[RMDB]
RNA sequence: GGGAACGACUCGAGUAGAGUCGAAAAAGCGUUAAUUGCAUGCGGAGGGCGUUGGCUGGCCUCCUAAAAAGCCGACAAAACAAUAAAUGCCGAACCUAAGGCUGAAUGCGAAAUUAUCAGCUUCGCUGAUCUCGAAGAUCUAAGAGUAGCUGCUUAACUUUACCACUAUCUUCGGAUAGUGGUAAAGAAAAGAAACAACAACAACAAC
Reactivity to 2A3 in 0.01 (KOAc 150mM, MgCl2 10mM, bicine 150mM(pH8.5), 24C), signal-to-noise 3, nucleotides 027 to 156: a000g040c040g000u070u060a120a070u220u080g060c050a020u060g010c020g010g030a020g040g010g010c020g030u070u040g000g020c020u020g030g060c010c000u060c010c010u040a040a050a040a020a000g020c000c000g010a030c000a020a110a030a020c050a070a120u160a170a120a030u150g020c020c020g030a050a030c020c060u050a100a000g000g000c010u000g030a050a060u090g010c010g020a040a000a040u110u060a040u120c020a020g010c030u040u020c010g000c060u070g020a050u000c030u090c140g080a110a070g010a070u010c020u100a120a010g010a020g030u030a030g010c000u050g010c030u070u050a070a050
Reactivity to DMS in 0.01 (KOAc 150mM, MgCl2 10mM, bicine 150mM(pH8.5), 24C), signal-to-noise 2, nucleotides 027 to 156: a070g010c020g060u010u020a080a050u000u010g010c000a100u000g060c000g030g020a220g010g020g030c100g010u000u000g040g010c060u000g050g000c010c000u000c010c010u020a010a090a070a060a060g010c030c020g030a070c030a100a120a090a050c030a040a090u020a060a090a090u020g000c010c010g000a080a070c090c050u000a090a150g020g010c010u000g000a090a110u010g000c070g010a160a100a130u000u000a020u010c040a060g010c000u010u000c030g010c090u010g000a040u000c050u000c100g000a110a090g010a030u020c030u000a060a090g010a140g040u000a140g020c000u000g040c050u000u000a070a250